[RMDB]
RNA sequence: GGGAACGACUCGAGUAGAGUCGAAAACGUUGUCAUCGACAACACCCUAUGCAUUCAUGCUCUGUAAGGAUGAGCCGAAAGGUGAGCAAGCCCGAGUUGCCCAGACCUGAAAUGCAACACUUUAGAGAAAACCCGAAGCAGUUCGCUGCUUCGGGAAUCGUAUUUUGAUCUUCGGAUCAAAAUACGAAAAAGAAACAACAACAACAAC
Reactivity to 2A3 in 0.01 (KOAc 150mM, MgCl2 10mM, bicine 150mM(pH8.5), 24C), signal-to-noise 1, nucleotides 027 to 156: c080g000u000u010g000u000c090a260u140c300g000a030c000a000a000c000a040c000c000c000u080a060u020g010c000a020u000u070c010a010u060g030c030u000c000u020g110u110a060a030g080g030a020u070g020a030g000c010c010g090a180a080a040g000g010u040g030a110g040c060a050a040g040c030c010c000g050a050g060u070u060g000c000c000c000a010g030a040c030c040u000g030a040a040a040u030g000c000a060a100c050a040c070u070u140u160a170g010a020g000a110a040a040a030c000c000c000g000a000a000g040c000a010g030u080u120c140g000c080u000g030c000u000u000c000g000g000g000a000a000
Reactivity to DMS in 0.01 (KOAc 150mM, MgCl2 10mM, bicine 150mM(pH8.5), 24C), signal-to-noise 1, nucleotides 027 to 156: c110g040u120u010g000u000c010a210u070c070g000a130c010a090a030c000a100c050c030c000u000a070u000g000c050a150u010u000c050a180u010g010c050u020c040u020g000u000a200a240g030g000a090u050g000a190g030c000c000g050a130a090a020g050g000u000g010a200g030c050a120a130g010c060c020c000g010a200g010u000u000g020c010c070c000a070g020a060c000c060u030g000a110a110a060u000g040c050a070a070c020a070c040u000u010u010a070g010a130g000a070a120a070a250c010c000c010g000a020a010g000c000a020g040u030u030c250g010c030u000g010c010u000u000c000g000g040g000a000a000